[RMDB]
RNA sequence: GGGAACGACUCGAGUAGAGUCGAAAAGAAAGAAAAUCGGACAACCAAACCGACGAAUGCCGUGUAAGGUUGUAACGGCAGAAACGUCUCGAAAGAGUAAAAGAAGCUCAAAACGAGACCAAAGAAAGCGUAUAAAUGGGUUCGCCCAUUUAUACGCAAAAGAAACAACAACAACAAC
Reactivity to 2A3 in 0.01 (KOAc 150mM, MgCl2 10mM, bicine 150mM(pH8.5), 24C), signal-to-noise 2, nucleotides 027 to 126: g050a000a040a000g060a030a270a000a010u040c000g000g000a000c040a110a100c070c080a070a020a020c010c000g000a030c040g090a170a100u030g000c000c000g030u010g020u140a150a110g050g030u030u060g000u090a040a000c020g000g000c000a000g000a020a120a000c100g000u000c000u000c000g160a120a170a070g020a000g010u090a140a120a000a020g150a200a020g000c000u000c000a090a100a000a000c010g000a000g010a000c030c020a040a110a000g150a020a010a020
Reactivity to DMS in 0.01 (KOAc 150mM, MgCl2 10mM, bicine 150mM(pH8.5), 24C), signal-to-noise 2, nucleotides 027 to 126: g010a120a080a050g020a040a050a180a150u000c000g010g000a140c130a050a130c120c060a040a270a130c030c000g000a000c130g050a170a140u000g000c010c000g000u020g000u020a050a150g000g000u010u000g040u000a090a060c000g000g000c040a000g020a100a090a200c210g010u000c000u000c000g020a020a180a300g020a000g000u020a040a020a120a050g130a250a250g010c010u030c040a000a030a110a130c000g000a000g000a020c000c140a060a060a090g000a100a140a040